[RMDB]
Chemical mapping of a 177-nucleotide RNA with DMS and 2A3.
Reactivities are given for positions 27 through 126.
The reactions ran in a buffer of 150 mM KOAc, 10 mM MgCl2 and 150 mM bicine (pH 8.5), at 24 C.
For 2A3 the reverse transcriptase was SuperScript II with manganese.
RNA sequence: GGGAACGACUCGAGUAGAGUCGAAAAAACUACUUCUUCGGAAGUAGUUAUUGCGUGGCUCUAAUAAGCCCAAGGUGCCAGGUUCGACCCUUGCUGGGCGCAUCACCGACCGAUUCGUCGGUCGGAACGAAUAAGUGUACUUCGGUACACUUAUUCGAAAAGAAACAACAACAACAAC
Reactivity to DMS in 0.01 (KOAc 150mM, MgCl2 10mM, bicine 150mM(pH8.5), 24C), signal-to-noise 5, nucleotides 027 to 126: a030a000c000u000a000c000u010u000c000u000u010c190g020g000a010a000g010u000a010g010u000u000a010u000u000g020c060g020u000g010g000c000u010c050u010a090a100u000a150a110g010c010c010c030a050a060g020g010u000g020c010c020a070g020g020u000u000c080g010a120c020c000c010u000u010g020c080u010g000g010g020c030g010c050a060u010c150a220c000c010g010a010c000c010g010a040u000u010c170g020u000c000g010g010u000c010g010g010a020a070
Reactivity to 2A3 in 0.01 (KOAc 150mM, MgCl2 10mM, bicine 150mM(pH8.5), 24C), signal-to-noise 3, nucleotides 027 to 126: a000a000c000u010a000c000u000u000c000u020u040c270g070g010a020a000g000u000a000g000u000u010a130u040u090g020c050g050u050g010g020c000u020c010u050a100a220u120a240a050g020c000c000c030a040a060g180g030u070g010c010c020a030g070g030u070u110c080g070a180c010c020c000u030u110g030c040u050g030g000g030c010g000c020a040u110c040a020c000c000g000a000c000c000g000a020u030u050c220g050u010c000g080g000u000c000g000g000a000a020